[RMDB]
RNA sequence: GGGAACGACUCGAGUAGAGUCGAAAACACUGUUAAACAUUUUCCAGAGCACGGCUGUCUGUGAGGGACAGGUCAGGAUCUCCAGGGACCUGUAGGUGUGAUGGUGUUAGGGGAGGGAUGGCAGGCGCGUACUAUCUGGAUUCGUCCAGAUAGUACGAAAAGAAACAACAACAACAAC
Reactivity to 2A3 in 0.01 (KOAc 150mM, MgCl2 10mM, bicine 150mM(pH8.5), 24C), signal-to-noise 6, nucleotides 027 to 126: c030a010c050u100g050u200u190a110a180a050c040a120u060u070u060u040c030c010a020g010a010g100c050a010c070g060g000c020u020g010u040c010u040g100u080g110a060g010g010g000a010c000a000g020g020u020c010a010g060g070a190u060c070u050c110c010a060g100g010g030a010c000c000u010g020u040a040g030g060u080g030u060g060a110u080g000g060u070g040u130u100a100g010g010g030g040a060g020g050g020a060u080g020g000c020a020g040g060c040g010
Reactivity to DMS in 0.01 (KOAc 150mM, MgCl2 10mM, bicine 150mM(pH8.5), 24C), signal-to-noise 6, nucleotides 027 to 126: c070a090c120u010g010u010u010a100a090a130c090a110u010u000u000u000c030c030a110g010a160g010c090a120c050g010g010c030u010g010u000c010u000g010u010g010a110g000g010g010a030c010a010g000g010u000c020a060g000g000a150u000c120u000c020c030a090g010g020g000a020c020c000u000g010u010a070g010g000u000g000u010g000a100u000g000g010u010g000u000u000a100g010g020g000g000a090g010g000g010a080u010g000g000c040a050g000g000c090g000
Conditions: 150 mM KOAc, 10 mM MgCl2 and 150 mM bicine (pH 8.5), 24 C. An RNA of 177 nucleotides, treated with 2A3 and DMS and read out base by base. For DMS the reverse transcriptase was MarathonRT. The DMS profile rests on 9,953 reads. As a SHAPE reagent, 2A3 marks flexible, mostly unpaired nucleotides at the ribose 2'-OH.